RNA sequence: GGGAACGACUCGAGUAGAGUCGAAAACUAAUUUUUGUGUAUUUUUAGUAGAGAUGGAGUUUCACUAUGUUGGUCAGGCUGGUCUCAUGAUCCUCCCACCUUGGCCUCCCAACGUGCUGGGAUUACAGUAGACACAGUUAUUCGUAACUGUGUCUACAAAAGAAACAACAACAACAAC
Reactivity to DMS in 0.01 (KOAc 150mM, MgCl2 10mM, bicine 150mM(pH8.5), 24C), signal-to-noise 4, nucleotides 027 to 126: c030u030a030a050u000u000u000u000u000g010u010g010u000a020u000u000u000u010u000a060g010u000a070g020a060g000a070u000g000g000a070g020u000u000u000c050a060c070u000a030u000g000u000u000g020g010u000c050a040g000g020c040u000g000g000u000c030u000c060a080u000g010a060u010c030c030u000c020c020c030a080c070c040u000u000g000g010c050c030u000c070c010c020a020a060c170g020u000g030c090u000g010g000g000a060u000u000a020c140a120
Reactivity to 2A3 in 0.01 (KOAc 150mM, MgCl2 10mM, bicine 150mM(pH8.5), 24C), signal-to-noise 1, nucleotides 027 to 126: c010u060a030a080u030u070u030u050u080g070u030g020u030a160u020u120u010u000u040a050g030u020a010g000a000g000a050u010g070g000a030g000u010u060u000c020a030c030u060a040u090g020u000u030g040g050u010c000a030g010g040c010u030g000g010u000c020u010c030a070u080g050a040u060c000c020u000c000c020c000a040c020c000u030u030g030g000c000c000u050c000c010c000a020a030c040g040u030g010c020u020g000g000g000a020u030u080a040c020a010
Chemical mapping of a 177-nucleotide RNA with DMS and 2A3. For DMS, 6,284 sequencing reads were counted. DMS adducts were read by reverse transcription with MarathonRT. The reactions ran in a buffer of 150 mM KOAc, 10 mM MgCl2 and 150 mM bicine (pH 8.5), at 24 C. 2A3 adducts were read by reverse transcription with SuperScript II with manganese. The data come from the RNA Mapping Database (RMDB), library OK2TRN.